[RMDB]
RNA sequence: GGGAACGACUCGAGUAGAGUCGAAAACGAUGCUGCGUGUCUACAUCUAUUUCAUCAGAUUGAUCACAAAGCCGACGAACGGUCGUCUGAUGUGAAAACACCGCAGAGCAGGCUGCGGUGUUUGGUGAGUGACACAAUGUUUCGACAUUGUGUCACUAAAAGAAACAACAACAACAAC
Reactivity to DMS in 0.01 (KOAc 150mM, MgCl2 10mM, bicine 150mM(pH8.5), 24C), signal-to-noise 3, nucleotides 027 to 126: c080g000a040u010g020c010u000g020c120g010u000g010u000c080u020a150c060a060u000c020u010a160u010u000u000c010a020u010c000a040g000a020u010u030g030a040u000c010a130c140a080a110a110g020c050c060g020a070c080g000a100a140c240g030g000u000c010g000u000c000u000g000a030u000g000u000g020a060a020a010a020c010a000c000c000g010c000a010g010a180g020c040a020g000g010c010u000g000c020g010g020u000g010u000u000u000g030g010u000g010
Reactivity to 2A3 in 0.01 (KOAc 150mM, MgCl2 10mM, bicine 150mM(pH8.5), 24C), signal-to-noise 2, nucleotides 027 to 126: c020g030a020u070g020c010u020g000c020g060u110g050u090c040u090a060c010a060u010c020u160a160u070u220u070c020a000u000c000a000g020a050u250u300g010a000u100c000a020c020a220a140a100g140c090c050g050a050c050g000a140a030c140g010g040u020c000g000u030c010u010g040a020u030g050u020g080a040a020a000a000c000a000c000c000g000c010a000g010a010g060c000a000g260g010c010u000g000c000g000g020u000g010u010u010u010g020g030u100g090